[RMDB]
RNA sequence: GGGAACGACUCGAGUAGAGUCGAAAAGAUAUGGAUGCCUAUGGACAUGCUGACAUAUCGGAAACGAUAUGAAUCAGCAACAGCCAUCAGGCAUCCUAAGUCAAAGAUUCUGGUUCGCCAGAAUCAACACAAGUACUAUCUUCGGAUAGUACUUGUGAAAAGAAACAACAACAACAAC
Reactivity to DMS in 0.01 (KOAc 150mM, MgCl2 10mM, bicine 150mM(pH8.5), 24C), signal-to-noise 3, nucleotides 027 to 126: g020a020u000a160u010g000g000a010u000g000c000c020u010a030u000g000g000a050c140a280u000g010c010u010g000a060c010a000u000a000u000c000g020g010a040a020a080c000g010a010u000a000u000g000a210a190u010c010a000g010c000a040a030c290a130g020c010c000a000u000c300a020g000g010c000a000u010c000c000u000a000a030g000u000c010a120a140a140g000a020u000u010c000u000g010g010u000u010c300g010c000c000a020g000a010a000u000c000a120a150
Reactivity to 2A3 in 0.01 (KOAc 150mM, MgCl2 10mM, bicine 150mM(pH8.5), 24C), signal-to-noise 3, nucleotides 027 to 126: g020a010u020a010u100g000g000a000u000g000c000c010u010a000u010g030g000a080c200a300u300g010c000u000g000a000c000a000u000a000u020c020g000g000a030a020a010c010g000a000u000a000u020g180a200a270u040c000a010g060c000a040a010c040a020g000c000c000a010u070c160a030g000g000c000a000u000c000c010u010a000a000g000u020c010a000a100a180g000a010u000u050c000u010g020g090u040u080c300g060c090c010a000g030a000a000u020c020a000a050

Chemical mapping of a 177-nucleotide RNA with DMS and 2A3. The 2A3 profile rests on 7,539 reads. It was measured as part of the RMDB library TTRDES. For 2A3 the reverse transcriptase was SuperScript II with manganese. Reactivities are given for positions 27 through 126. The reactions ran in a buffer of 150 mM KOAc, 10 mM MgCl2 and 150 mM bicine (pH 8.5), at 24 C.